RNA sequence: GGGAACGACUCGAGUAGAGUCGAAAAUAGUAGCCGAAGCGACAGCGCAAAGGGGGCGAGGGGUGGUCCUGCGGGCGCGAGGAAGGACACCCGAAGAAAGGAAGGGUGAAAACCCUGUUUCGGCGGGCCAGUACAUUAUCUUCGGAUAAUGUACUGGAAAAGAAACAACAACAACAAC
Reactivity to DMS in 0.01 (KOAc 150mM, MgCl2 10mM, bicine 150mM(pH8.5), 24C), signal-to-noise 1, nucleotides 027 to 126: u010a100g010u030a090g040c000c030g010a070a050g000c050g030a030c180a110g030c040g040c110a060a070a160g020g010g000g040g010c050g010a060g060g000g010g000u010g000g030u000c030c020u000g020c080g010g000g010c030g020c040g010a070g000g060a070a060g020g000a080c110a100c010c000c000g020a030a120g000a050a020a050g000g000a180a080g000g010g000u000g000a060a110a090a060c010c000c010u010g010u000u000u000c000g000g030c090g010g010g000